Annotation:
This 177-nucleotide RNA was probed chemically with 2A3. The 2A3 profile rests on 470 reads. It was measured as part of the RMDB library OK1LIB. The reactions ran in a buffer of 150 mM KOAc, 10 mM MgCl2 and 150 mM bicine (pH 8.5), at 24 C.

RNA sequence: GGGAACGACUCGAGUAGAGUCGAAAAUGCGCCUGCUGUUUUAAGCAAAUCAAACAUCAAGCGGCAAGAAAUAGGCUCACGACCGCGAUGCUUUUUAUCUUGUCUAGAAUAUCCAAGCAACGGGCACCGUGAGCGUCACGUUCGCGUGACGCUCACGAAAAGAAACAACAACAACAAC
Reactivity to 2A3 in 0.01 (KOAc 150mM, MgCl2 10mM, bicine 150mM(pH8.5), 24C), signal-to-noise 1, nucleotides 027 to 126: u030g000c010g000c030c000u010g000c000u000g000u080u030u030u130a090a040g130c030a040a000a060u270c110a040a110a030c030a020u050c060a100a070g020c090g090g000c000a060a020g040a060a060a000u290a100g040g000c000u000c050a060c070g150a170c020c000g000c060g040a030u020g040c020u000u070u000u120u120a170u090c030u000u000g000u000c030u040a080g000a070a030u080a030u000c120c010a000a000g000c000a010a010c000g000g000g000c000a000c040